[RMDB]
RNA sequence: GGGAACGACUCGAGUAGAGUCGAAAAAUACAGCGUAAUCGAGCGGAGGAAAACGGCACUCCGAUAAUCCGGUACGAUUAUGAUCCCACUGCGUCGACGCUAGAUGCAGAACCGGAUUGCCGAGGAAGUGUGUGAAAACUUUCGAGUUUUCACACACAAAAGAAACAACAACAACAAC
Reactivity to 2A3 in 0.01 (KOAc 150mM, MgCl2 10mM, bicine 150mM(pH8.5), 24C), signal-to-noise 2, nucleotides 027 to 126: a020u190a000c040a010g020c000g040u060a110a000u130c050g020a060g120c010g020g020a010g000g080a070a180a030a060c020g050g010c020a010c010u010c000c000g040a040u040a000a030u000c000c030g030g070u050a030c040g030a030u080u060a070u180g090a040u010c000c000c000a000c010u020g000c000g000u000c020g030a060c120g040c180u120a050g000a030u010g010c000a000g040a030a020c010c000g020g000a010u000u020g000c000c000g000a010g020g120a110a110
Reactivity to DMS in 0.01 (KOAc 150mM, MgCl2 10mM, bicine 150mM(pH8.5), 24C), signal-to-noise 2, nucleotides 027 to 126: a070u020a100c240a060g020c050g030u000a020a020u000c060g000a160g000c010g020g000a010g000g000a100a010a100a210c060g000g010c020a060c030u020c010c010g000a070u000a050a050u000c000c000g000g000u000a080c130g030a060u010u000a020u000g020a070u020c020c010c010a300c020u000g020c020g020u000c000g020a180c270g020c170u000a060g010a010u010g000c020a020g000a150a060c080c030g000g010a030u000u000g010c060c050g010a110g000g000a040a140